The record gives the reactivity of an RNA of 177 nucleotides to DMS and 2A3. Reactivities are given for positions 27 through 126. 2A3 adducts were read by reverse transcription with SuperScript II with manganese. The RNA was probed in 150 mM KOAc, 10 mM MgCl2 and 150 mM bicine (pH 8.5) at 24 C. DMS adducts were read by reverse transcription with MarathonRT. In probing experiments dimethyl sulfate is read out at A N1 and C N3, which are open when not base-paired.

[RMDB]
RNA sequence: GGGAACGACUCGAGUAGAGUCGAAAAUCUGCCUUCGGGCAGAAAGUCAUACAAGUGCAUCAAUGGAACUGUUUCUUCUGGUUUGGAAGGAAUAUUGAUGUUUUUUAUAGUGCGAUGUUCGCAUCGCCCUGAUAAGCAGCUUCGGCUGCUUAUCAGGAAAAGAAACAACAACAACAAC
Reactivity to DMS in 0.01 (KOAc 150mM, MgCl2 10mM, bicine 150mM(pH8.5), 24C), signal-to-noise 2, nucleotides 027 to 126: u000c000u000g010c000c010u010u000c300g030g010g040c000a010g000a030a060a110g020u000c060a090u030a080c210a090a050g000u010g020c000a010u000c020a010a020u000g010g000a130a200c290u020g000u000u000u000c000u000u000c020u000g020g020u000u020u040g020g000a030a020g000g000a010a020u010a010u010u010g000a030u000g020u010u000u000u020u000u000a120u010a110g020u000g000c000g020a000u000g010u000u010c230g000c000a020u000c010g030c010
Reactivity to 2A3 in 0.01 (KOAc 150mM, MgCl2 10mM, bicine 150mM(pH8.5), 24C), signal-to-noise 2, nucleotides 027 to 126: u010c000u000g000c000c000u020u040c140g050g020g010c000a010g000a010a010a010g040u030c020a010u070a250c070a110a050g080u000g130c000a020u010c010a010a070u090g160g030a140a120c100u110g040u040u000u000c000u020u000c010u030g300g050u240u250u300g040g000a010a010g010g000a000a010u070a020u040u010g000a000u000g020u000u000u000u000u010u140a300u120a060g060u030g000c000g010a000u000g020u070u070c110g000c090a000u020c000g000c000